[RMDB]
RNA sequence: GGGAACGACUCGAGUAGAGUCGAAAAGAAGAGAACUUCGGUUCUCUUCAAAGCUGUUACCCACGCCAAGAAAUCCCGGAACAUUGGCUCGUUAGCCGGAGAAAACCGGGAAGUUCGCUUCCCGGAAGUGAUAAGGUAUGUUCGCAUACCUUAUCACAAAAGAAACAACAACAACAAC
Reactivity to DMS in 0.01 (KOAc 150mM, MgCl2 10mM, bicine 150mM(pH8.5), 24C), signal-to-noise 6, nucleotides 027 to 126: g010a020a010g000a010g010a010a000c010u000u020c190g040g010u000u000c000u000c000u000u000c000a040a120a110g010c080u010g010u010u000a140c030c020c010a120c150g010c030c070a070a060g010a080a100a110u000c030c010c000g000g010a060a060c090a110u000u010g010g010c030u010c180g010u000u000a090g020c010c020g010g010a140g000a080a070a120a110c010c000g000g010g010a010a010g010u000u010c190g010c010u000u000c000c000c000g000g010a020a040
Reactivity to 2A3 in 0.01 (KOAc 150mM, MgCl2 10mM, bicine 150mM(pH8.5), 24C), signal-to-noise 4, nucleotides 027 to 126: g000a000a010g020a000g000a010a000c020u070u080c230g070g000u010u000c000u010c000u000u000c000a010a000a000g020c030u040g090u140u130a130c000c000c010a020c020g010c020c020a070a030g070a110a140a070u060c020c020c000g020g030a070a030c040a140u050u130g040g000c020u020c030g040u020u170a040g040c010c030g000g010a120g040a030a070a010a030c010c010g000g030g000a000a000g000u010u010c130g020c110u000u020c000c000c000g010g000a020a020